[RMDB]
RNA sequence: GGGAACGACUCGAGUAGAGUCGAAAACAUAUUGUACGUCAGCGUUUAACUGAGUACACUAUGAUGGAUCUUGUAUAUGCCCUGAGGCACUUUGAUCAAAAUAGCGAAGUGCUUAAGGCUAUCUUAGCGGCACACAGGUUCGCCUGUGUGAAAAGAAACAACAACAACAAC
Reactivity to DMS in 0.01 (KOAc 150mM, MgCl2 10mM, bicine 150mM(pH8.5), 24C), signal-to-noise 9, nucleotides 027 to 129: c040a000u020a010u000u000g020u000a020c000g030u000c000a000g020c140g040u100u090u080a130a210c000u000g010a100g000u000a020c000a020c070u010a020u020g000a100u000g000g000a110u020c030u020u010g000u030a050u030a050u060g000c080c020c050u010g000a110g000g000c000a040c020u000u010u000g000a060u070c200a080a090a140a090u060a100g000c010g000a000a000g010u000g000c020u000u000a100a060g000g010c000u020a040u010c050u020u020a040g010c130g000g040
Reactivity to 2A3 in 0.01 (KOAc 150mM, MgCl2 10mM, bicine 150mM(pH8.5), 24C), signal-to-noise 9, nucleotides 027 to 129: c000a000u010a010u000u010g010u000a030c070g300u010c020a010g040c120g110u100u160u200a110a040c000u000g000a000g000u000a000c000a000c010u010a010u040g030a060u060g070g030a040u040c030u080u100g090u070a060u010a010u210g020c000c010c020u030g040a100g010g000c000a000c010u020u010u010g050a100u150c170a090a120a120a070u140a060g070c010g020a000a000g000u010g010c000u000u020a010a000g000g000c000u010a010u010c010u030u110a040g060c060g060g010